[RMDB]
RNA sequence: GGGAACGACUCGAGUAGAGUCGAAAAUUAAAUAACGCGAAGAAGCAGAGAAAGGACUGCAAGGACGCGAAACCACCAACGUCAGGAACAGCAGGAAGGAGCUGAAAUAGACGAACCACCAAAAAAAACCUUCAUAUAGGUUCGCCUAUAUGAAGGUAAAAGAAACAACAACAACAAC
Reactivity to 2A3 in 0.01 (KOAc 150mM, MgCl2 10mM, bicine 150mM(pH8.5), 24C), signal-to-noise 1, nucleotides 027 to 126: u050u010a030a000a030u160a110a020c030g010c010g000a050a060g030a060a010g050c000a010g030a000g100a140a230a070g200g070a070c020u000g020c010a010a050g040g000a000c020g000c000g000a020a020a030c020c010a050c030c030a050a030c020g020u050c010a000g000g060a090a080c000a020g020c030a010g090g070a140a010g070g040a060g010c020u010g050a040a020a030u050a020g010a000c010g030a030a010c000c030a030c030c060a150a060a050a030a000a020a010
Reactivity to DMS in 0.01 (KOAc 150mM, MgCl2 10mM, bicine 150mM(pH8.5), 24C), signal-to-noise 2, nucleotides 027 to 126: u010u010a070a080a110u030a070a170c060g000c010g000a050a300g000a110a130g020c030a020g000a130g020a090a090a170g000g000a130c040u000g020c020a050a070g000g030a290c000g010c010g010a050a050a130c020c010a130c040c060a020a060c100g030u020c020a010g010g000a120a090c040a020g000c040a010g000g000a030a080g040g000a060g010c000u010g010a000a040a030u000a090g000a060c030g010a110a080c100c050a040c100c030a000a000a000a050a050a090a150
An RNA of 177 nucleotides, treated with 2A3 and DMS and read out base by base. DMS adducts were read by reverse transcription with MarathonRT. Values cover nucleotides 27 to 126. The reactions ran in a buffer of 150 mM KOAc, 10 mM MgCl2 and 150 mM bicine (pH 8.5), at 24 C. It was measured as part of the RMDB library M2PK90.